Annotation:
Structure probing data (DMS and 2A3) for a 207-nucleotide construct. For DMS, 4,113 sequencing reads were counted. The RNA was probed in 150 mM KOAc, 10 mM MgCl2 and 150 mM bicine (pH 8.5) at 24 C.
RNA sequence: GGGAACGACUCGAGUAGAGUCGAAAACAAGUCGGCUACCGUAGCAGCACCACAAGCUUGCACUGACGAUGCGCCAGCUCCAGACAAAAGACGUAGCGCUAUGAGUACGCCAAUUGAUGGAGAUAAUGCAGAACCAAUGCAAAAUGCCAAAAACCAGUCAUCGAAUAACUUUCGAGUUAUUCGAUGAAAAAGAAACAACAACAACAAC
Reactivity to DMS in 0.01 (KOAc 150mM, MgCl2 10mM, bicine 150mM(pH8.5), 24C), signal-to-noise 3, nucleotides 027 to 156: c060a070a140g010u010c030g020g010c020u000a050c010c010g040u000a080g080c040a110g030c010a150c050c030a050c070a090a290g010c050u000u000g020c110a040c010u020g000a050c030g000a240u000g020c090g050c020c030a100g000c020u010c010c000a030g000a140c050a030a040a110a250g010a050c040g020u000a060g040c030g020c060u010a060u000g000a150g030u000a020c160g030c000c000a050a200u000u000g030a130u000g000g000a040g000a130u000a040a100u020g010c020a060g020a080a110c090c060a050a090u000g000c030a030a020a080a110u000g000c020c050a030a090a050a090a100c050c000a120g000
Reactivity to 2A3 in 0.01 (KOAc 150mM, MgCl2 10mM, bicine 150mM(pH8.5), 24C), signal-to-noise 8, nucleotides 027 to 156: c040a030a020g120u110c050g010g000c000u030a030c010c010g010u020a010g000c130a030g000c010a020c030c020a030c050a080a030g010c020u040u040g010c020a030c040u100g100a160c080g100a110u100g040c030g000c020c020a020g000c010u030c040c050a160g040a270c080a060a090a010a010g090a040c070g050u060a040g050c010g010c030u030a020u080g050a060g070u010a030c130g010c000c020a010a020u060u060g070a080u060g030g010a010g010a040u070a070a020u100g000c000a000g030a090a070c060c050a070a030u040g010c020a030a020a010a070u080g010c020c000a070a090a010a000a010c020c030a030g080